Description:
An RNA of 177 nucleotides, treated with DMS and 2A3 and read out base by base. For 2A3 the reverse transcriptase was SuperScript II with manganese. 2A3 is a SHAPE reagent: it acylates the 2'-hydroxyl of flexible nucleotides of all four kinds. The data come from the RNA Mapping Database (RMDB), library M2PK50. The 2A3 profile rests on 33,707 reads.

RNA sequence: GGGAACGACUCGAGUAGAGUCGAAAACUAUGCAGAUUCGUCUGCAUAGAGACCCGAUGAAGCGGCACUUACACACCUUCAUACACGUAAGAAGUGCAAUAAAGGGACGAGGGUUCGCCCUCGUCAAACGUAUGUAACAGUUCGCUGUUACAUACGUAAAAGAAACAACAACAACAAC
Reactivity to DMS in 0.01 (KOAc 150mM, MgCl2 10mM, bicine 150mM(pH8.5), 24C), signal-to-noise 9, nucleotides 027 to 126: c000u000a000u000g000c000a010g000a030u000u010c220g020u000c000u000g010c000a000u000a000g000a110g010a170c000c000c000g010a110u000g000a040a040g020c070g010g010c030a070c040u000u000a140c180a100c140a120c130c020u000u000c040a060u010a100c140a070c180g000u010a070a060g010a080a050g010u000g010c030a130a080u010a040a060a100g010g000g000a010c010g010a020g000g000g020u000u010c220g010c000c000c000u000c000g010u000c010a010a050
Reactivity to 2A3 in 0.01 (KOAc 150mM, MgCl2 10mM, bicine 150mM(pH8.5), 24C), signal-to-noise 9, nucleotides 027 to 126: c000u010a000u000g000c000a000g020a050u030u100c110g130u000c080u000g000c000a000u000a000g000a010g010a020c000c000c010g020a120u140g040a040a010g050c090g060g000c080a010c030u060u130a040c110a000c020a040c080c020u030u030c020a040u110a200c100a010c150g050u050a050a030g050a090a010g060u010g000c030a020a070u190a170a090a030g210g040g000a000c000g000a000g010g000g020u030u070c180g120c010c000c000u000c000g000u000c000a000a010